[RMDB]
RNA sequence: GGGAACGACUCGAGUAGAGUCGAAAACAGGCAAACGGUCCUGAGGGCGCAGGUGUAGCGCAGAGCACCGCACUGUCAUGUCUCAGGGUGAUGACUUUGCACGAUGACUGCAAGCAGGGCAUUGCAGGUGAUAAUCAAUAUUCGUAUUGAUUAUCACAAAAGAAACAACAACAACAAC
Reactivity to DMS in 0.01 (KOAc 150mM, MgCl2 10mM, bicine 150mM(pH8.5), 24C), signal-to-noise 9, nucleotides 027 to 126: c070a130g010g010c020a030a040a100c180g020g010u000c010c010u000g010a080g010g010g020c200g010c030a030g010g010u000g010u000a100g010c040g010c030a040g000a070g010c020a020c030c010g010c020a050c020u000g010u000c100a110u010g010u010c070u000c020a020g000g000g030u000g010a050u000g000a100c060u000u000u000g010c010a060c040g010a080u010g000a150c020u000g010c010a060a100g010c020a070g010g010g010c020a120u000u000g000c020a090g010
Reactivity to 2A3 in 0.01 (KOAc 150mM, MgCl2 10mM, bicine 150mM(pH8.5), 24C), signal-to-noise 9, nucleotides 027 to 126: c030a010g090g000c020a020a040a040c150g100g030u030c010c000u010g020a060g040g110g060c090g000c020a030g000g050u080g030u100a040g020c030g000c060a020g020a010g050c010a010c020c020g020c010a030c030u030g030u110c050a150u200g220u080c030u000c050a010g010g000g030u030g020a080u050g080a110c000u020u020u030g000c030a020c050g050a050u130g070a030c010u010g000c010a020a070g030c020a070g070g040g000c060a080u010u040g000c020a020g130